The data come from the RNA Mapping Database (RMDB), library M2PK50. The record gives the reactivity of an RNA of 177 nucleotides to 2A3 and DMS. For 2A3 the reverse transcriptase was SuperScript II with manganese. DMS (dimethyl sulfate) methylates the pairing face of unpaired adenines and cytosines.
[RMDB]
RNA sequence: GGGAACGACUCGAGUAGAGUCGAAAACGUGAUGUGUUCGCACAUCACGAAACUUUGAAGCCGGGAAACACGGCAACCGGCAACAAAGCCGAGUUACAAAGAAAACGCCUGACUUCGGUCAGGCGAACAAAUGAAUUCUCUUCGGAGAAUUCAUUUGAAAAGAAACAACAACAACAAC
Reactivity to 2A3 in 0.01 (KOAc 150mM, MgCl2 10mM, bicine 150mM(pH8.5), 24C), signal-to-noise 1, nucleotides 027 to 126: c010g000u000g000a000u010g010u020g010u020u090c140g040c050a000c010a010u010c000a000c000g000a010a000a020c020u050u040u030g050a070a010g030c000c000g010g010g050a120a090a020c100a010c020g040g050c010a000a010c000c000g000g000c010a050a000c030a050a070a000g030c000c010g020a030g060u080u070a110c080a070a120a040g160a030a080a060a000c030g000c000c000u000g010a000c000u030u040c210g060g000u000c000a000g010g000c010g010a000a010
Reactivity to DMS in 0.01 (KOAc 150mM, MgCl2 10mM, bicine 150mM(pH8.5), 24C), signal-to-noise 2, nucleotides 027 to 126: c030g010u000g020a010u000g030u010g010u000u010c180g020c010a000c010a000u010c000a000c010g000a050a100a110c010u000u010u010g010a070a300g010c000c000g020g010g010a110a050a100c060a090c140g010g000c170a080a020c000c000g000g000c000a030a190c090a020a070a030g010c040c030g000a120g000u000u010a080c110a030a070a080g000a090a070a100a140c010g020c000c000u000g000a000c000u000u000c170g010g000u000c000a010g010g010c010g000a030a060